[RMDB]
RNA sequence: GGGAACGACUCGAGUAGAGUCGAAAAAACUGAGUACACUAUGAUGGAUCUUGUAUAUGCCCUGAGGCACUUUGAUCAAAAUAGCGAAGUGCUUAAGGCUAUCUUAGUGAAGUAUGGUUGCUGUGAUGAACUAGGUUGUUCGCAACCUAGAAAAGAAACAACAACAACAAC
Reactivity to 2A3 in 0.01 (KOAc 150mM, MgCl2 10mM, bicine 150mM(pH8.5), 24C), signal-to-noise 5, nucleotides 027 to 129: a000a030c170u140g030a000g030u050a010c010a010c060u020a030u080g160a030u020g030g000a040u020c010u030u090g110u080a050u010a030u200g040c020c010c010u010g010a010g010g000c000a000c000u000u000u010g040a080u200c140a110a090a060a130u080a060g070c000g010a000a000g000u000g000c010u000u040a000a000g000g010c000u000a040u020c020u010u070a020g000u010g040a060a010g020u010a030u110g070g000u000u000g010c010u000g070u060g060a120u120g010a060a030
Reactivity to DMS in 0.01 (KOAc 150mM, MgCl2 10mM, bicine 150mM(pH8.5), 24C), signal-to-noise 5, nucleotides 027 to 129: a000a000c010u000g000a070g030u000a070c060a000c030u000a050u000g000a050u030g030g010a070u030c050u000u000g070u000a090u020a070u000g050c110c010c030u000g020a040g010g010c010a020c030u040u000u030g030a060u000c180a090a090a120a090u010a100g020c020g020a000a000g000u020g000c030u010u000a080a040g020g020c040u000a000u020c050u010u010a000g020u020g010a120a110g010u030a060u020g000g020u000u000g000c030u050g030u050g000a130u000g000a070a150